Record summary: This 177-nucleotide RNA was probed chemically with 2A3 and DMS. Reactivities are rounded to 0.1 and cut off at 0 and 3.
[RMDB]
RNA sequence: GGGAACGACUCGAGUAGAGUCGAAAAAAAGAUAUGGAACGAGCGACGCUUGGAUUUAUACAGGACCGUACAUCGGAAACGAUGUACUAGUACUGUAUUGUCAGCGUCCCUCGUUCCUAAGUCAAAAGAUCAAUACCCUGUUCGCAGGGUAUUGAUCAAAAGAAACAACAACAACAAC
Reactivity to 2A3 in 0.01 (KOAc 150mM, MgCl2 10mM, bicine 150mM(pH8.5), 24C), signal-to-noise 1, nucleotides 027 to 126: a000a000a000g130a040u120a050u160g000g000a010a000c020g000a000g020c000g000a010c010g030c020u110u230g180g010a030u300u300u030a030u030a010c000a000g020g020a000c010c000g000u020a000c000a010u010c010g000g040a000a090a000c020g000a000u000g060u000a000c000u000a000g000u010a000c000u000g010u010a010u000u000g000u010c000a010g000c010g020u020c000c000c000u000c010g000u000u000c000c000u010a010a000g020u020c010a040a000a010a180
Reactivity to DMS in 0.01 (KOAc 150mM, MgCl2 10mM, bicine 150mM(pH8.5), 24C), signal-to-noise 2, nucleotides 027 to 126: a060a040a100g000a030u000a300u000g010g000a000a000c000g020a030g050c300g010a020c010g030c020u010u020g030g000a000u000u030u020a010u000a000c000a000g000g010a070c300c190g010u000a000c010a000u000c000g020g000a120a110a150c010g010a000u000g000u010a020c000u010a010g000u000a100c010u000g010u000a000u000u000g010u000c010a040g010c000g020u000c010c070c000u000c010g000u000u000c010c000u000a000a060g010u000c030a100a030a130a160